[RMDB]
RNA sequence: GGGAACGACUCGAGUAGAGUCGAAAAACAUGCUACAAUGGCCAGUACAGAGGGCUGCGAGACCGUGAGGUGGAGCGAAUCCCUUAAAGCUGGUCUCAGUUCGGAUCGCCGUCUGCAACUCGACGGCAGUAUAUUUGAAAUUCGUUUCAAAUAUACUAAAAGAAACAACAACAACAAC
Reactivity to 2A3 in 0.01 (KOAc 150mM, MgCl2 10mM, bicine 150mM(pH8.5), 24C), signal-to-noise 9, nucleotides 027 to 126: a000c060a050u160g060c040u120a060c060a090a130u150g000g000c000c000a010g010u070a020c040a070g040a010g010g010g000c040u050g000c010g000a020g030a010c000c010g030u070g060a060g000g000u010g000g010a010g010c000g040a050a080u080c000c000c000u000u040a060a040a000g000c000u000g000g000u000c000u000c000a000g000u030u060c020g060g020a060u090c040g000c010c000g010u010c000u070g100c070a130a100c070u050c140g000a000c000g000g000c000
Reactivity to DMS in 0.01 (KOAc 150mM, MgCl2 10mM, bicine 150mM(pH8.5), 24C), signal-to-noise 9, nucleotides 027 to 126: a090c070a080u030g010c080u010a050c140a130a080u030g000g010c000c000a020g000u000a040c110a300g000a020g000g010g010c300u010g010c000g000a300g000a020c000c000g000u070g000a140g010g010u000g000g000a300g000c010g000a070a080u020c000c000c000u000u000a020a070a270g000c010u000g000g010u010c000u010c120a070g010u000u010c050g000g000a120u020c060g000c000c010g010u000c000u020g010c120a090a070c180u020c110g000a010c000g000g000c010